RNA sequence: GGGAACGACUCGAGUAGAGUCGAAAAUCGUAAGAAAUGGGGUGCUGAGCAAGUCCAAAUCUGGCGCCGUUCUUAUGACAUUGCUCCUCCCAACGGUGAGUCCUUGAAGGACACCGCCGAGCGUGUAUGACCUCCAUUUAUUCGUAAAUGGAGGUCAAAAAGAAACAACAACAACAAC
Reactivity to DMS in 0.01 (KOAc 150mM, MgCl2 10mM, bicine 150mM(pH8.5), 24C), signal-to-noise 3, nucleotides 027 to 126: u010c040g010u000a050a010g000a000a040a050u010g040g020g040g040u000g010c020u010g010a060g030c220a110a160g010u020c150c170a050a080a130u000c030u000g030g000c010g000c030c000g000u010u000c000u000u000a020u000g000a070c050a020u000u000g030c010u000c020c110u010c010c000c010a100a280c010g000g000u000g020a150g020u000c000c010u000u010g010a150a180g020g000a060c000a040c020c020g000c030c060g000a040g000c020g000u010g000u000a240
Reactivity to 2A3 in 0.01 (KOAc 150mM, MgCl2 10mM, bicine 150mM(pH8.5), 24C), signal-to-noise 2, nucleotides 027 to 126: u050c000g000u020a000a000g020a020a130a110u300g190g110g000g060u070g020c030u060g040a030g000c060a150a030g110u010c060c030a070a030a130u070c080u090g000g000c010g010c000c010g050u020u010c000u020u030a030u030g000a000c030a050u050u300g000c000u010c020c000u030c020c010c000a010a000c010g040g000u050g080a100g080u050c030c000u080u120g160a160a050g000g000a000c000a020c010c010g070c010c020g000a010g000c080g030u010g000u030a060